Structure probing data (2A3 and DMS) for a 177-nucleotide construct. Conditions: 150 mM KOAc, 10 mM MgCl2 and 150 mM bicine (pH 8.5), 24 C. Source: RMDB libraries RFM100 and RFMREP, as collected in RNAgym.
RNA sequence: GGGAACGACUCGAGUAGAGUCGAAAAUCUGGACGCGGGUUCGAUUCCCGCCACCUCCACAGUGGGCAUUCUCAAGAGUGUUCAGUGUGGGGGUGCACCGGUUUCGACAGGGCGGGCAAUGGUGAGCAUUAACGAACGAUUUCGAUCGUUCGUUAAUAAAAGAAACAACAACAACAAC
Reactivity to 2A3 in 0.01 (KOAc 150mM, MgCl2 10mM, bicine 150mM(pH8.5), 24C), signal-to-noise 7, nucleotides 027 to 126: u050c030u040g020g020a010c050g030c060g000g000g000u050u050c020g010a020u030u040c000c020c000g000c010c000a000c000c000u000c000c000a000c000a070g160u010g000g000g000c010a010u030u000c060u030c080a170a120g010a010g010u000g010u010u000c020a060g070u030g000u000g020g000g000g000g000u000g000c000a000c010c000g020g000u010u030u010c010g010a020c020a080g020g030g030c130g030g010g010c050a040a100u100g110g020u120g050a040g040c040
Reactivity to DMS in 0.01 (KOAc 150mM, MgCl2 10mM, bicine 150mM(pH8.5), 24C), signal-to-noise 7, nucleotides 027 to 126: u000c010u010g020g010a110c140g000c030g000g000g000u020u010c110g000a300u000u010c050c010c040g010c300c010a010c000c000u010c000c000a010c000a020g000u000g000g000g000c000a000u000u000c000u040c300a100a180g000a010g020u000g010u000u000c000a000g010u000g020u000g010g010g000g000g010u000g010c100a060c100c090g020g010u000u000u010c040g000a060c300a130g000g020g010c100g020g000g010c100a110a090u020g010g000u000g000a080g010c150